[RMDB]
RNA sequence: GGGAACGACUCGAGUAGAGUCGAAAAAGCCGCAACGCCGGCACCAUCACAGGAGGACCAAAUGAACCCCGAACAAAACCGCAUGCUCGUUGCGAUCUACAACGCACUCUUCAACAAGAAGAGCAUGGAAAGGAACAAUUUUCGAAUUGUUCCUUUCAAAAGAAACAACAACAACAAC
Reactivity to DMS in 0.01 (KOAc 150mM, MgCl2 10mM, bicine 150mM(pH8.5), 24C), signal-to-noise 5, nucleotides 027 to 126: a150g020c060c030g030c080a110a100c140g020c120c030g000g030c050a070c040c030a060u010c060a070c110a070g000g010a110g010g010a090c060c050a030a050a050u010g010a110a150c050c000c000c020g020a080a090c160a060a030a050a090c100c060g010c040a030u000g000c010u000c050g010u020u010g010c020g000a060u010c060u010a050c130a100a080c050g010c070a100c150u000c010u000u010c040a120a120c220a070a080g000a040a060g010a000g010c060a020u000g000
Reactivity to 2A3 in 0.01 (KOAc 150mM, MgCl2 10mM, bicine 150mM(pH8.5), 24C), signal-to-noise 4, nucleotides 027 to 126: a000g020c040c000g000c100a210a080c080g140c200c030g030g020c020a020c020c010a020u090c030a040c010a040g020g030a050g040g010a040c040c000a060a080a060u080g010a020a120c020c000c020c010g020a080a020c050a040a110a020a020c060c030g000c050a010u040g000c000u020c060g090u070u030g000c010g020a040u030c010u100a070c040a140a040c040g010c020a040c020u040c000u070u030c020a220a270c010a070a040g020a030a010g000a020g000c000a000u040g070
Chemical mapping of a 177-nucleotide RNA with DMS and 2A3. DMS (dimethyl sulfate) methylates the pairing face of unpaired adenines and cytosines. For DMS, 4,481 sequencing reads were counted. Reactivities are given for positions 27 through 126. The reactions ran in a buffer of 150 mM KOAc, 10 mM MgCl2 and 150 mM bicine (pH 8.5), at 24 C. For DMS the reverse transcriptase was MarathonRT.